[RMDB]
RNA sequence: GGGAACGACUCGAGUAGAGUCGAAAAGAGUGUCGCCGGCAAUCGUCGCCCCCAGCCGACGGCGCUAUCCCGGGGACGGGUCGUAACCCGCUCGUCCCCGCCUUUACACCUUCCGGAAGGAGUUCAGGGAGGAACAAAAGUUCGCUUUUGUUCCUCCAAAAGAAACAACAACAACAAC
Reactivity to 2A3 in 0.01 (KOAc 150mM, MgCl2 10mM, bicine 150mM(pH8.5), 24C), signal-to-noise 1, nucleotides 027 to 126: g110a000g000u010g020u010c000g000c000c000g000g020c040a020a190u140c110g240u140c070g080c040c000c000c000c000a000g020c000c010g000a010c000g010g000c010g010c000u060a090u050c000c000c000g010g000g000g000a000c010g020g000g000u110c020g020u030a080a180c030c000c010g000c000u000c000g000u000c010c010c000c000g000c000c010u070u070u050a080c060a060c020c030u080u020c020c000g030g010a050a040g030g000a080g020u020u090c010a030g100
Reactivity to DMS in 0.01 (KOAc 150mM, MgCl2 10mM, bicine 150mM(pH8.5), 24C), signal-to-noise 1, nucleotides 027 to 126: g000a000g000u000g050u020c010g040c010c070g020g000c000a210a090u050c230g000u050c060g000c000c000c000c000c000a100g000c010c020g000a010c090g010g000c000g030c000u000a010u000c020c050c020g000g010g000g000a120c010g000g020g000u030c050g010u050a180a130c200c230c060g000c000u000c000g010u000c010c010c000c010g080c100c080u060u000u000a010c080a210c060c010u020u020c040c040g000g080a040a100g050g000a060g010u000u000c070a130g060
An RNA of 177 nucleotides, treated with 2A3 and DMS and read out base by base.
Values cover nucleotides 27 to 126.
DMS adducts were read by reverse transcription with MarathonRT.
For DMS, 1,119 sequencing reads were counted.
The 2A3 profile rests on 1,768 reads.
Source: RMDB library RFM100, as collected in RNAgym.
The reactions ran in a buffer of 150 mM KOAc, 10 mM MgCl2 and 150 mM bicine (pH 8.5), at 24 C.